[RMDB]
RNA sequence: GGGAACGACUCGAGUAGAGUCGAAAAUUGUAAGUGAUAAGGAUGGUGACAUGCAUUACGAUGUUAUGAGCGCUUUCCAAAAAUCUAUCCGUGGUAGCGACGUCAAUGCCGCUUUACAUUAUUUAGCCAUAGCUAUCCAAUUCGUUGGAUAGCUAUGAAAAGAAACAACAACAACAAC
Reactivity to 2A3 in 0.01 (KOAc 150mM, MgCl2 10mM, bicine 150mM(pH8.5), 24C), signal-to-noise 9, nucleotides 027 to 126: u140u060g030u060a060a070g060u020g130a050u050a100a060g030g010a020u030g030g020u010g010a010c000a010u020g020c000a010u020u050a050c170g110a030u030g020u140u300a030u040g070a120g100c020g000c010u010u020u000c000c000a070a040a040a020a040u020c040u050a060u010c040c040g030u040g030g020u030a020g020c030g050a060c020g050u110c070a040a080u140g020c010c000g010c000u060u060u040a050c040a050u050u160a130u140u230u130a030g030c020
Reactivity to DMS in 0.01 (KOAc 150mM, MgCl2 10mM, bicine 150mM(pH8.5), 24C), signal-to-noise 9, nucleotides 027 to 126: u010u010g010u010a050a080g010u010g010a050u010a080a240g010g010a030u000g010g020u000g000a090c020a030u000g010c010a030u000u000a120c180g020a030u000g010u000u010a020u000g010a130g010c030g010c030u000u000u000c010c010a020a080a060a100a070u010c090u000a060u010c050c050g010u000g000g010u000a030g010c020g010a020c030g000u000c230a070a090u010g010c020c020g010c010u000u000u010a040c060a050u000u000a130u000u000u000a120g010c200